[RMDB]
RNA sequence: GGGAACGACUCGAGUAGAGUCGAAAACGCGGGGAGGUGGAGAUGCCAUGCCGACCCGAAGAGGAAAGAAGGACUCGGACGCGAACCCGUGAGUGGAAACCUCGUUCUUUAUUGGGGAGUACACUCGAUCGGAGUAUCUUCGGAUACUCCAAAAGAAACAACAACAACAAC
Reactivity to 2A3 in 0.01 (KOAc 150mM, MgCl2 10mM, bicine 150mM(pH8.5), 24C), signal-to-noise 9, nucleotides 027 to 129: c070g010c030g000g010g000g000a040g000g020u070g030g020a130g010a060u160g080c040c010a060u120g020c010c000g030a050c000c010c010g010a030a020g040a010g020g020a060a020a030g040a010a020g010g000a020c010u020c030g010g000a010c020g010c030g040a050a090c010c000c010g060u090g010a000g000u000g000g000a020a010a020c010c010u080c070g110u250u070c100u150u300u150a250u170u160g010g000g000g000a000g000u010a000c000a000c010u010c000g010a070u100c040
Reactivity to DMS in 0.01 (KOAc 150mM, MgCl2 10mM, bicine 150mM(pH8.5), 24C), signal-to-noise 9, nucleotides 027 to 129: c120g000c030g040g000g000g000a060g020g020u030g040g010a090g000a090u020g010c040c040a060u040g040c040c000g000a110c030c000c030g020a050a060g020a070g020g000a030a030a030g000a010a010g010g010a030c060u010c130g000g010a080c110g010c070g010a060a140c040c020c030g020u040g020a010g000u020g030g000a090a080a120c020c010u020c140g030u070u000c230u040u050u040a040u010u000g040g000g000g040a040g000u020a070c000a010c020u000c010g020a090u050c110